The data come from the RNA Mapping Database (RMDB), library TTRDEL. This 177-nucleotide RNA was probed chemically with 2A3 and DMS. The reactions ran in a buffer of 150 mM KOAc, 10 mM MgCl2 and 150 mM bicine (pH 8.5), at 24 C.
[RMDB]
RNA sequence: GGGAACGACUCGAGUAGAGUCGAAAAGAUAUGGAGUAUAGUUAUCUUACCCUGCGUUGAAAUCGGAAACGAUGGAGCAGGUAAGAAUUCUAUACUCCUAAGUCAAAGAGCGAGUUCGCUCGCUCAAGAUCGCAAUUGAGUUCGCUCAAUUGCGAUCAAAAGAAACAACAACAACAAC
Reactivity to 2A3 in 0.01 (KOAc 150mM, MgCl2 10mM, bicine 150mM(pH8.5), 24C), signal-to-noise 1, nucleotides 027 to 126: g000a020u030a070u100g000g000a030g030u000a000u000a010g050u110u010a200u110c000u020u000a000c110c090c040u000g030c020g300u300u030g000a030a000a000u010c010g020g050a050a060a020c000g000a000u010g040g000a010g000c010a010g000g010u010a000a000g020a000a020u060u000c000u000a000u000a010c000u030c000c000u020a010a000g000u000c010a070a060a050g030a000g040c000g000a000g050u100u130c210g150c140u000c000g000c000u000c000a010a020
Reactivity to DMS in 0.01 (KOAc 150mM, MgCl2 10mM, bicine 150mM(pH8.5), 24C), signal-to-noise 1, nucleotides 027 to 126: g000a070u020a300u000g000g000a020g000u000a020u000a000g000u000u000a210u000c020u000u000a050c090c050c040u000g060c000g000u000u020g010a100a190a020u000c000g010g000a120a110a260c060g000a010u000g000g000a110g060c000a000g040g000u000a000a000g000a040a300u010u000c000u000a020u000a010c000u000c000c000u000a000a110g000u000c010a020a090a260g000a020g010c000g030a050g020u000u000c170g050c020u000c000g010c000u000c000a050a120